The record gives the reactivity of an RNA of 177 nucleotides to 2A3.
RNA sequence: GGGAACGACUCGAGUAGAGUCGAAAAUCCAAGUGGCGUAUGGGAGCGUAGUGCUUUAUGGCGCAGUGACGUACAAUCCCUUUCCACAACAUUGAAGAACAAGCAUGUCCUCGGCCAUUAGGCUGUUGCAACAUCCUCAUUUCGAUGAGGAUGUUGCAAAAGAAACAACAACAACAAC
Reactivity to 2A3 in 0.01 (KOAc 150mM, MgCl2 10mM, bicine 150mM(pH8.5), 24C), signal-to-noise 2, nucleotides 027 to 126: u100c000c000a110a000g030u000g020g000c050g020u070a080u050g000g000g000a070g010c020g000u000a040g010u050g020c000u060u160u080a140u300g040g000c000g000c020a040g050u060g120a010c010g000u020a090c040a030a060u010c000c000c000u010u030u000c010c000a020c010a110a010c060a110u100u300g120a150a060g070a030a020c020a070a000g030c060a070u070g050u160c000c010u070c020g000g010c000c000a050u090u060a050g000g030c020u060g050u000u030
Notes:
Reactivities are rounded to 0.1 and cut off at 0 and 3. It was measured as part of the RMDB libraries RFM100 and RFMREP.